[RMDB]
RNA sequence: GGGAACGACUCGAGUAGAGUCGAAAAGAUAUGGACAGUAAUCGCGAUAAGAAGCCAUCGGAAACGAUGGGCUUCUUUUGACGCGGAUACUGUCCUAAGUCAAAACCCUUAACUUCGGUUAAGGGAACAAUAGAGUGAUGUUCGCAUCACUCUAUUGAAAAGAAACAACAACAACAAC
Reactivity to DMS in 0.01 (KOAc 150mM, MgCl2 10mM, bicine 150mM(pH8.5), 24C), signal-to-noise 8, nucleotides 027 to 126: g000a020u000a160u010g000g000a020c000a000g010u000a010a040u000c000g020c000g020a130u010a010a010g010a020a000g010c000c000a010u000c000g020g000a050a030a080c000g010a010u000g010g020g010c010u000u000c000u000u000u000u010g010a180c110g040c000g010g000a050u000a000c000u000g000u000c000c000u000a000a040g000u000c010a140a100a140a180c000c000c000u000u000a010a010c000u000u020c230g030g010u000u000a010a010g000g010g010a020a030
Reactivity to 2A3 in 0.01 (KOAc 150mM, MgCl2 10mM, bicine 150mM(pH8.5), 24C), signal-to-noise 6, nucleotides 027 to 126: g010a000u020a010u080g000g000a000c000a000g010u010a030a070u030c010g000c030g090a150u100a300a000g000a010a000g000c000c000a000u000c000g000g010a030a010a010c010g000a010u030g010g000g020c000u010u000c020u000u010u020u080g070a040c040g000c000g000g000a010u010a000c000u010g000u000c000c000u000a000a000g000u000c000a020a040a120a260c000c000c000u000u000a010a000c010u040u080c300g120g000u010u000a010a010g010g010g020a000a020

An RNA of 177 nucleotides, treated with DMS and 2A3 and read out base by base. Conditions: 150 mM KOAc, 10 mM MgCl2 and 150 mM bicine (pH 8.5), 24 C. For 2A3, 36,533 sequencing reads were counted. 2A3 adducts were read by reverse transcription with SuperScript II with manganese. The data come from the RNA Mapping Database (RMDB), library TTRDES.